Annotation: An RNA of 177 nucleotides, treated with DMS and 2A3 and read out base by base. The RNA was probed in 150 mM KOAc, 10 mM MgCl2 and 150 mM bicine (pH 8.5) at 24 C. The data come from the RNA Mapping Database (RMDB), library VIROID. 2A3 adducts were read by reverse transcription with SuperScript II with manganese.
RNA sequence: GGGAACGACUCGAGUAGAGUCGAAAACGGUGUCAAAGCAAUGGCGUAGACCUCAGGCACCGAGCAUUUAUAUCGGAGCAAGCUUGGCCAAGUAGAGCCAGAGAAGUGGGUCGAAGUGGGGCGCAAACCUGAAUACCAAGUUCGCUUGGUAUUCAGGAAAAGAAACAACAACAACAAC
Reactivity to DMS in 0.01 (KOAc 150mM, MgCl2 10mM, bicine 150mM(pH8.5), 24C), signal-to-noise 2, nucleotides 027 to 126: c060g030g000u000g000u000c010a090a170a120g010c060a090a050u010g010g020c030g030u010a090g000a140c030c000u010c040a060g000g000c010a020c010c000g000a050g010c210a050u020u000u000a100u010a130u020c080g000g000a080g010c080a110a120g020c010u010u000g000g000c010c060a120a200g040u000a030g010a090g000c030c010a060g010a020g020a050a060g010u000g000g000g000u000c060g010a080a080g030u000g000g000g020g000c160g050c110a020a070a050
Reactivity to 2A3 in 0.01 (KOAc 150mM, MgCl2 10mM, bicine 150mM(pH8.5), 24C), signal-to-noise 2, nucleotides 027 to 126: c050g000g000u000g020u020c010a080a020a030g020c040a090a080u300g020g000c070g140u130a080g030a210c010c020u040c060a010g020g060c010a000c000c020g000a000g010c000a040u040u290u170a220u080a040u130c050g020g020a030g050c040a110a000g000c030u060u030g000g000c010c010a080a020g010u070a020g070a040g020c000c010a040g000a000g010a170a030g050u220g010g050g010u010c000g010a020a000g020u110g020g000g000g000c070g000c000a050a020a020